Overview:
Structure probing data (DMS and 2A3) for a 177-nucleotide construct. For DMS, 969 sequencing reads were counted. 2A3 adducts were read by reverse transcription with SuperScript II with manganese. The reactions ran in a buffer of 150 mM KOAc, 10 mM MgCl2 and 150 mM bicine (pH 8.5), at 24 C. For 2A3, 1,784 sequencing reads were counted. For DMS the reverse transcriptase was MarathonRT.
[RMDB]
RNA sequence: GGGAACGACUCGAGUAGAGUCGAAAACAGUCCGUGUCGACCGGGAGCCGAGUGAUAACGUCGAUGUCGCUCGGAAGACAGAGAUCGACGACCUCGACGACGCAAAAAUCGACCUCGCCGAGAAAGGCAGUACGUGACGUUUCGACGUCACGUACUGAAAAGAAACAACAACAACAAC
Reactivity to DMS in 0.01 (KOAc 150mM, MgCl2 10mM, bicine 150mM(pH8.5), 24C), signal-to-noise 2, nucleotides 027 to 126: c070a160g000u000c030c000g000u000g010u000c000g020a070c120c000g040g010g010a240g050c010c000g000a040g010u000g000a080u000a110a140c080g000u000c010g000a070u000g020u000c000g000c110u000c050g030g000a040a030g030a110c150a180g000a110g050a050u000c000g020a050c030g000a050c110c030u000c010g020a030c010g010a130c150g000c140a000a090a120a070a080u000c040g000a040c010c020u000c040g080c000c010g010a050g020a060a070a110g000g000
Reactivity to 2A3 in 0.01 (KOAc 150mM, MgCl2 10mM, bicine 150mM(pH8.5), 24C), signal-to-noise 2, nucleotides 027 to 126: c040a020g060u030c020c030g120u100g050u090c010g030a090c020c050g040g010g020a020g050c040c020g040a000g040u070g040a110u040a130a060c040g050u010c040g020a020u040g040u010c010g010c060u010c000g020g020a020a020g030a030c090a010g140a000g020a220u060c010g020a040c010g070a030c030c020u000c010g030a010c000g020a040c040g050c070a080a180a060a040a000u080c050g030a040c000c020u020c010g030c030c000g010a050g100a060a060a000g060g000